The record gives the reactivity of an RNA of 177 nucleotides to DMS.
[RMDB]
RNA sequence: GGGAACGACUCGAGUAGAGUCGAAAACGUUUGCUCCUUUCUGGGAAGGGCAGAAUGCCCAAGGUCCCCAGAAUGCUGCUAAGGCUGGCCCGGGGGUGGGGUCCAGCAGGCCCUGUCCUUCCCCUCAGGUAGUGCAUAACUUCGGUUAUGCACUACCAAAAGAAACAACAACAACAAC
Reactivity to DMS in 0.01 (KOAc 150mM, MgCl2 10mM, bicine 150mM(pH8.5), 24C), signal-to-noise 1, nucleotides 027 to 126: c180g000u000u000u020g050c040u000c020c060u000u010u030c100u000g000g000g010a040a050g030g030g000c010a060g010a120a060u010g020c000c000c020a140a170g000g000u000c000c000c030c010a050g000a080a070u010g000c020u000g000c200u000a070a240g000g020c000u000g000g010c040c020c000g030g000g020g020g010u020g010g010g020g030u010c010c010a000g010c300a070g010g000c020c300c030u020g010u000c010c010u000u010c020c010c000c200u000c040a080